[RMDB]
RNA sequence: GGGAACGACUCGAGUAGAGUCGAAAAUAAGGUCCGACCUUAUCGGCAAGCUCAAUGAGCUCCUUGGUGGUGGUAACAUCCAGAGAAGCACACAGGUUGGUUUUCUUGGCUGCCACGAGCUUGAGCAUCUAUAAUGGCGUUUCGACGCCAUUAUAGAAAAAGAAACAACAACAACAAC
Reactivity to 2A3 in 0.01 (KOAc 150mM, MgCl2 10mM, bicine 150mM(pH8.5), 24C), signal-to-noise 3, nucleotides 027 to 126: u050a000a010g030g010u070c120c100g030a200c060c020u080u050a070u060c040g030g030c100a070a020g000c000u000c010a040a240u250g010a060g020c010u000c030c040u070u140g170g010u070g000g000u020g000g020u030a100a010c050a100u040c030c020a020g010a000g000a120a010g050c010a010c010a020c060a110g210g060u160u030g050g100u000u050u060u000c020u030u080g040g020c040u010g000c010c000a000c030g000a010g000c000u040u030g030a000g000c000a030
Reactivity to DMS in 0.01 (KOAc 150mM, MgCl2 10mM, bicine 150mM(pH8.5), 24C), signal-to-noise 5, nucleotides 027 to 126: u010a030a030g010g010u010c140c120g020a140c040c020u000u010a040u000c070g020g000c080a090a090g010c000u010c010a220a070u010g010a070g000c010u000c010c120u000u000g010g040u000g010g020u010g000g010u010a090a130c100a050u010c040c040a260g000a020g010a040a000g010c020a040c060a160c200a110g000g000u000u010g000g000u000u000u010u000c040u000u000g020g020c080u000g000c010c000a060c160g010a010g010c020u010u000g000a060g020c070a140

The record gives the reactivity of an RNA of 177 nucleotides to 2A3 and DMS. The RNA was probed in 150 mM KOAc, 10 mM MgCl2 and 150 mM bicine (pH 8.5) at 24 C. The 2A3 profile rests on 3,149 reads. The DMS profile rests on 5,600 reads. DMS adducts were read by reverse transcription with MarathonRT.